This 177-nucleotide RNA was probed chemically with DMS and 2A3. For DMS the reverse transcriptase was MarathonRT. Source: RMDB library TTRINS, as collected in RNAgym. For 2A3, 12,997 sequencing reads were counted. Conditions: 150 mM KOAc, 10 mM MgCl2 and 150 mM bicine (pH 8.5), 24 C.
[RMDB]
RNA sequence: GGGAACGACUCGAGUAGAGUCGAAAAGAUAUGGAGGAGAGUAAGUCUGAUGACCCAUGGGUAGACAAUAUGGUCGGAAACGACCAUAUUGUCAAACCAUGGCAAGGAUAUCUCUCCUCCUAAGUCACACUAUAUAUAACUUCGGUUAUAUAUAGUGAAAAGAAACAACAACAACAAC
Reactivity to DMS in 0.01 (KOAc 150mM, MgCl2 10mM, bicine 150mM(pH8.5), 24C), signal-to-noise 6, nucleotides 027 to 126: g010a020u010a300u010g000g010a030g020g010a020g010a020g010u000a170a240g010u000c000u000g010a080u010g010a110c300c000c000a010u000g000g000g010u010a300g010a020c010a000a000u000a000u000g010g000u000c000g000g000a050a050a150c010g000a010c000c000a000u000a000u000u000g020u000c000a020a120a280c000c000a000u000g000g000c030a060a040g010g010a010u000a300u000c000u000c000u000c000c000u000c000c000u000a000a030g000u000c010a300
Reactivity to 2A3 in 0.01 (KOAc 150mM, MgCl2 10mM, bicine 150mM(pH8.5), 24C), signal-to-noise 4, nucleotides 027 to 126: g020a020u060a030u170g000g000a010g030g020a010g020a000g050u110a300a170g060u060c010u030g230a300u080g020a250c000c000c010a000u000g030g000g050u200a100g010a000c000a000a000u010a010u010g000g000u010c010g030g000a070a060a010c000g000a000c030c000a000u000a000u010u000g000u000c000a010a010a000c000c000a000u000g000g000c010a050a080g010g010a010u020a150u070c000u000c000u000c000c000u000c000c000u000a000a000g000u000c000a000